Conditions: 150 mM KOAc, 10 mM MgCl2 and 150 mM bicine (pH 8.5), 24 C.
Chemical mapping of a 207-nucleotide RNA with 2A3 and DMS.
For 2A3, 834 sequencing reads were counted.
Reactivities are rounded to 0.1 and cut off at 0 and 3.
The DMS profile rests on 2,169 reads.
[RMDB]
RNA sequence: GGGAACGACUCGAGUAGAGUCGAAAAAGGAUUGCUGCAAGAGCUGAACAACCAGUGACAAAUGCGAAGUGCUUAGAAUGGUGCCUGGCACAUAGUGCUAAACAGUUGUUAGUGCUCAUCAUUUAUUAGGAUUCCUGCAACAGCCUGGUGGGAUGACUCAUAGACCGUGUUUCGACACGGUCUAUGAAAAAGAAACAACAACAACAAC
Reactivity to 2A3 in 0.01 (KOAc 150mM, MgCl2 10mM, bicine 150mM(pH8.5), 24C), signal-to-noise 2, nucleotides 027 to 156: a000g050g000a160u070u080g020c010u080g050c040a010a060g020a020g030c010u030g030a030a000c040a020a010c030c020a050g020u000g100a090c060a020a070a040u040g000c030g070a110a000g100u030g060c050u160u110a070g060a160a040u060g050g000u000g000c050c100u020g020g010c020a000c000a080u090a010g070u050g050c000u000a070a110a040c030a040g020u020u030g020u020u070a070g000u030g020c060u070c040a060u020c000a010u010u070u170a170u070u150a040g060g000a020u080u060c030c010u070g030c030a030a030c010a100g050c020c000u020g010g000u050g010g030g000a040u050g020a000c020
Reactivity to DMS in 0.01 (KOAc 150mM, MgCl2 10mM, bicine 150mM(pH8.5), 24C), signal-to-noise 1, nucleotides 027 to 156: a160g000g010a130u010u000g010c010u000g050c040a070a120g030a100g020c010u020g040a030a100c020a090a090c000c020a140g030u010g020a100c050a040a110a020u010g030c030g020a110a060g020u000g020c140u000u000a110g010a050a100u020g030g040u000g000c040c040u000g020g030c020a000c020a140u010a100g000u000g040c020u000a040a060a060c040a110g000u010u000g010u000u000a040g000u010g000c000u000c040a100u000c030a030u000u000u000a150u000u020a140g000g000a210u000u000c010c040u010g020c100a030a070c070a040g000c010c040u010g000g040u000g020g050g020a070u000g000a300c080
For 2A3 the reverse transcriptase was SuperScript II with manganese.